[RMDB]
RNA sequence: GGGAACGACUCGAGUAGAGUCGAAAACGGCGGUGCGUGGACGGACAGCUCCAAGGGCGGCGAGUAGUUUUCUUGGCUGUUUGGCUGGAAACAUGGGGGUGUCGGUUAGCUGGGAGGUCCGGAACGGCGAUAAAUAAACAUUCGUGUUUAUUUAUCGAAAAGAAACAACAACAACAAC
Reactivity to 2A3 in 0.01 (KOAc 150mM, MgCl2 10mM, bicine 150mM(pH8.5), 24C), signal-to-noise 8, nucleotides 027 to 126: c010g020g010c020g010g020u040g010c030g020u040g020g030a020c000g000g020a010c010a030g030c030u000c020c030a040a040g030g010g010c000g000g000c020g010a030g020u080a010g000u020u020u060u050c020u080u130g050g000c020u030g070u220u130u220g070g000c020u020g010g020a030a040a020c030a100u090g010g000g000g000g010u030g020u010c010g000g030u030u040a020g000c010u010g020g000g000a030g010g000u010c000c000g000g010a060a020c020g040g000
Reactivity to DMS in 0.01 (KOAc 150mM, MgCl2 10mM, bicine 150mM(pH8.5), 24C), signal-to-noise 7, nucleotides 027 to 126: c070g010g010c040g010g000u010g010c060g030u010g000g000a090c070g010g000a070c090a080g010c060u010c040c070a110a090g010g000g000c040g000g000c050g010a080g010u010a080g010u000u010u010u010c030u010u030g020g010c030u000g010u020u020u040g000g010c030u000g000g000a080a050a050c080a090u020g010g000g000g000g000u000g010u000c050g000g010u010u010a070g010c030u000g000g010g000a080g000g000u010c020c030g020g010a070a070c100g000g000